[RMDB]
RNA sequence: GGGAACGACUCGAGUAGAGUCGAAAACUGCUCGUGAUGGCGUAAGGCGAGGCGAUAACUUCCAUAGUGUCUUAACAACAUUCAUUGACGCAGCACGAGGCCCCGCAGGUGUGGAGUCUGAUGUUGACUAUGUGUUUUCCUUCGGGAAAACACAUAGAAAAGAAACAACAACAACAAC
Reactivity to DMS in 0.01 (KOAc 150mM, MgCl2 10mM, bicine 150mM(pH8.5), 24C), signal-to-noise 2, nucleotides 027 to 126: c060u000g010c020u000c010g000u020g000a060u000g020g000c080g030u020a070a090g000g010c100g010a040g020g030c110g020a140u020a010a140c120u000u000c050c060a090u000a050g020u010g030u010c020u000u030a050a130c170a120a090c030a020u000u010c080a110u020u000g000a060c110g050c100a120g020c050a060c040g000a040g000g020c020c010c020c030g040c110a090g020g010u030g010u000g010g010a140g020u000c050u000g000a100u000g010u010u010g000a220